[RMDB]
RNA sequence: GGGAACGACUCGAGUAGAGUCGAAAAUCAUGGUGAUUCACAUGAGGCAUUAUGUGAUGCAGUUAUGACAAAAUGUUUAUAUCUUACAAGCUAUCAGGCUGCAUUUAAAGAUACAUUACAUGUUAAGACAAUGCUGAUUUUUCGAAAUCAGCAUUGUAAAAGAAACAACAACAACAAC
Reactivity to 2A3 in 0.01 (KOAc 150mM, MgCl2 10mM, bicine 150mM(pH8.5), 24C), signal-to-noise 4, nucleotides 027 to 126: u050c010a010u020g050g000u110g070a150u100u090c060a020c020a060u040g040a010g080g000c020a060u050u040a010u110g040u040g000a010u010g000c010a010g000u030u070a280u260g000a020c040a030a160a020a020u020g030u010u120u030a190u030a030u070c020u040u050a040c020a060a010g010c030u040a010u100c000a000g040g000c000u000g000c010a010u030u020u060a040a060a010g050a010u070a100c000a010u040u100a020c020a060u050g000u020u100a030a010g050
Reactivity to DMS in 0.01 (KOAc 150mM, MgCl2 10mM, bicine 150mM(pH8.5), 24C), signal-to-noise 8, nucleotides 027 to 126: u010c020a030u010g010g020u010g010a130u010u010c060a090c020a010u010g010a050g020g020c140a040u000u010a010u010g020u000g010a020u000g010c020a020g000u000u000a070u000g020a030c110a050a060a230a100u000g010u010u010u000a090u010a070u010c120u010u000a050c070a060a040g010c190u000a170u010c050a020g000g000c010u000g000c040a050u000u000u000a100a040a090g010a050u010a030c040a030u010u010a050c050a050u000g000u000u000a080a100g010
Chemical mapping of a 177-nucleotide RNA with 2A3 and DMS.
For DMS, 10,375 sequencing reads were counted.
The reactions ran in a buffer of 150 mM KOAc, 10 mM MgCl2 and 150 mM bicine (pH 8.5), at 24 C.
For 2A3, 5,497 sequencing reads were counted.
As a SHAPE reagent, 2A3 marks flexible, mostly unpaired nucleotides at the ribose 2'-OH.